[RMDB]
RNA sequence: GGGAACGACUCGAGUAGAGUCGAAAAUAUGGCGCCAUCAAACUGAACCUGGCAGCUUGGGCGCCCCUCAUGGCCGAGAAACAGACUGGCGACCCCAUCAUGGCCAUAUUGAUGCAAGCCACGGAGACAUCCUUUUAGGGUUCGCCCUAAAAGGAUGAAAAGAAACAACAACAACAAC
Reactivity to 2A3 in 0.01 (KOAc 150mM, MgCl2 10mM, bicine 150mM(pH8.5), 24C), signal-to-noise 2, nucleotides 027 to 126: u230a100u110g010g010c040g010c020c000a100u120c040a120a070a090c030u040g020a040a100c020c010u040g080g000c020a000g000c000u040u070g040g000g000c000g020c000c010c000c010u060c020a040u020g040g000c000c000g070a060g060a090a150a010c060a020g120a090c030u050g010g020c040g060a100c010c000c030c010a020u060c020a050u100g030g000c020c000a020u060a020u070u150g050a030u080g010c020a040a040g040c000c000a020c070g030g000a020g040a010
Reactivity to DMS in 0.01 (KOAc 150mM, MgCl2 10mM, bicine 150mM(pH8.5), 24C), signal-to-noise 3, nucleotides 027 to 126: u010a100u010g030g000c010g040c020c010a120u020c050a020a030a040c040u010g000a140a120c070c040u000g010g020c020a040g010c040u000u010g010g000g010c010g040c000c020c100c040u000c080a050u010g010g010c030c000g000a060g010a060a110a070c120a100g020a100c100u000g010g010c020g000a160c090c030c020c030a060u000c040a100u010g010g010c020c020a030u000a060u010u010g000a090u000g000c070a070a150g020c020c020a030c110g020g000a130g000a180